RNA sequence: GGGAACGACUCGAGUAGAGUCGAAAAGAUAUGGAACGUGAAAUAACCCAGGCAAGCGAUAAGACGUGGUCGGAAACGACCAUACGUCUUUUGACGCUUGGCUGGGUUAUUUCACGUUCCUAAGUCAGGAUUAAAUAAGGUUCGCCUUAUUUAAUCCAAAAGAAACAACAACAACAAC
Reactivity to DMS in 0.01 (KOAc 150mM, MgCl2 10mM, bicine 150mM(pH8.5), 24C), signal-to-noise 1, nucleotides 027 to 126: g000a050u000a300u000g000g000a000a020c010g000u000g000a010a010a000u000a010a010c000c000c010a000g010g000c000a000a010g020c020g000a160u000a050a010g010a020c000g030u000g000g020u000c000g030g020a130a110a280c010g010a030c000c000a060u000a000c050g020u010c000u000u000u000u000g000a140c160g010c000u010u000g000g010c010u000g000g000g000u010u000a000u000u000u000c010a000c000g000u000u000c010c000u000a000a060g010u000c050a180